[RMDB]
RNA sequence: GGGAACGACUCGAGUAGAGUCGAAAAGAAUGCCCAUUCGUGGGCAUUCCACCGCAGCGAAGCCGAAAGCCAUUUUAUGCGUACGCUGGCGAAAGCCUAAAAAAGCUCCACUUUUCGAAGUGGAGAAAGAGGCAUAGAAAUUCGUUUCUAUGCCUCUAAAAGAAACAACAACAACAAC
Reactivity to DMS in 0.01 (KOAc 150mM, MgCl2 10mM, bicine 150mM(pH8.5), 24C), signal-to-noise 3, nucleotides 027 to 126: g000a010a000u000g000c000c000c010a040u000u010c190g030u010g010g010g010c000a010u000u000c000c060a160c110c030g000c060a020g020c030g000a080a210g000c010c060g000a070a040a090g020c110c130a080u010u010u010u000a070u020g000c030g010u000a130c070g010c040u000g000g010c010g010a080a080a150g010c000c030u010a000a030a050a130a100a150g010c000u000c000c000a010c000u000u000u000u020c150g000a030a000g000u000g000g010a000g000a000a020
Reactivity to 2A3 in 0.01 (KOAc 150mM, MgCl2 10mM, bicine 150mM(pH8.5), 24C), signal-to-noise 2, nucleotides 027 to 126: g000a000a000u000g010c010c000c000a010u010u070c260g050u020g000g000g020c000a000u000u050c010c000a050c050c000g000c000a010g020c020g070a060a010g030c020c040g050a060a010a020g030c060c040a080u060u070u070u110a100u170g000c020g020u080a020c060g000c050u020g030g000c010g000a050a030a000g040c000c020u180a090a090a020a020a020a020g020c000u000c000c000a010c010u070u020u070u140c200g040a010a010g000u000g000g000a000g000a000a000

This 177-nucleotide RNA was probed chemically with DMS and 2A3. For DMS the reverse transcriptase was MarathonRT. Conditions: 150 mM KOAc, 10 mM MgCl2 and 150 mM bicine (pH 8.5), 24 C. The data come from the RNA Mapping Database (RMDB), library M2PK50.